[RMDB]
RNA sequence: GGGAACGACUCGAGUAGAGUCGAAAAUUUACCUCGAUGAAAGUUUCAUUUUUACUAAUGUGAUUUUCAUGGGGAUAAGACCCUAUCAUGGUUAUAAUGACUUUUGGUGUAUCCAUCUUCCAAUAGAAACCUUUAGUGUGUUCGCACACUAAAGGUUAAAAGAAACAACAACAACAAC
Reactivity to 2A3 in 0.01 (KOAc 150mM, MgCl2 10mM, bicine 150mM(pH8.5), 24C), signal-to-noise 4, nucleotides 027 to 126: u030u050u060a110c000c000u000c100g160a000u000g000a000a000a000g010u020u040u020c010a000u000u040u080u150u190a200c210u110a010a000u000g000u000g030a000u000u000u000u000c000a010u030g010g010g000g010a010u030a040a010g060a030c010c000c000u030a060u070c050a050u120g070g020u070u140a100u060a230a090u150g090a070c010u020u080u080u080g050g010u060g030u080a080u060c030c000a050u020c040u120u000c010c020a040a050u040a130g120a080
Reactivity to DMS in 0.01 (KOAc 150mM, MgCl2 10mM, bicine 150mM(pH8.5), 24C), signal-to-noise 2, nucleotides 027 to 126: u050u000u030a050c000c000u000c020g010a010u000g000a010a010a000g000u000u000u000c010a000u000u000u010u030u090a210c130u020a010a000u000g020u000g000a020u010u000u000u000c010a010u000g010g020g030g000a080u010a020a030g000a110c000c020c000u030a100u020c090a070u010g000g010u020u000a050u000a070a080u030g000a030c050u000u010u010u010g000g010u010g030u010a050u010c060c030a040u030c040u040u000c020c020a080a120u010a120g010a100